[RMDB]
RNA sequence: GGGAACGACUCGAGUAGAGUCGAAAAAGAAUCUCCUUCGGGAGAUUCUGAACCACUAAGCUGAUUGCGGAUGAGGACGAGGCAGCUCGUGUCGAGCAACCACCGAGAACAGGUUCGCCUGUUCUAACCGUUGUUGAGCUUUCGAGCUCAACAACGGAAAAGAAACAACAACAACAAC
Reactivity to DMS in 0.01 (KOAc 150mM, MgCl2 10mM, bicine 150mM(pH8.5), 24C), signal-to-noise 1, nucleotides 027 to 126: a000g000a030a000u000c000u000c000c000u000u010c180g060g000g000a000g000a000u010u030c000u010g000a110a240c000c000a110c140u000a140a200g000c060u000g010a060u000u000g000c000g010g010a150u000g000a020g020g000a080c090g010a090g040g010c140a090g010c010u010c040g010u000g030u000c010g000a080g000c130a080a090c060c010a110c150c070g010a010g000a010a000c000a010g010g010u000u020c250g000c000c010u000g030u000u000c000u010a050a110

Notes:
The record gives the reactivity of an RNA of 177 nucleotides to DMS. DMS adducts were read by reverse transcription with MarathonRT. The data come from the RNA Mapping Database (RMDB), library M2PK50. Values are in units of 0.01, from 0 to 300, in steps of 10. Reactivities are given for positions 27 through 126.